[RMDB]
RNA sequence: GGGAACGACUCGAGUAGAGUCGAAAAAUAAACCGGAAGCGACGCAGCAAGCGCGACCGGAAGGGCAACCGGAACCCGGAUCUCAACCCGGUUGGGACGCACCUGAGAGACGGGAAUGCGUAAAAAAGAUCAAGAUAAGGUUCGCCUUAUCUUGAUCAAAAGAAACAACAACAACAAC
Reactivity to 2A3 in 0.01 (KOAc 150mM, MgCl2 10mM, bicine 150mM(pH8.5), 24C), signal-to-noise 2, nucleotides 027 to 126: a000u120a010a050a030c000c020g000g010a010a010g070c020g090a050c040g000c170a090g010c060a250a050g040c020g000c000g010a010c000c000g030g010a020a080g060g010g000c030a030a060c030c020g030g000a070a120c010c000c010g030g040a130u060c020u020c030a080a100c020c000c000g060g130u030u190g070g020g030a010c020g030c070a060c030c020u040g010a060g020a020g010a070c030g000g000g000a030a120u060g000c000g050u080a000a020a020a040a070a060
Reactivity to DMS in 0.01 (KOAc 150mM, MgCl2 10mM, bicine 150mM(pH8.5), 24C), signal-to-noise 3, nucleotides 027 to 126: a090u030a100a100a130c020c010g010g000a040a210g000c020g030a110c030g020c090a130g000c180a120a100g000c010g000c000g000a240c000c000g000g000a060a030g000g000g000c060a030a130c030c020g000g010a110a130c030c020c000g010g010a100u000c040u000c020a080a090c110c010c000g020g010u010u010g030g010g010a080c040g010c120a050c110c060u000g010a090g010a060g000a110c050g000g020g000a040a020u010g010c060g000u000a000a020a120a050a060a070

Conditions: 150 mM KOAc, 10 mM MgCl2 and 150 mM bicine (pH 8.5), 24 C. This 177-nucleotide RNA was probed chemically with 2A3 and DMS. The 2A3 profile rests on 2,422 reads.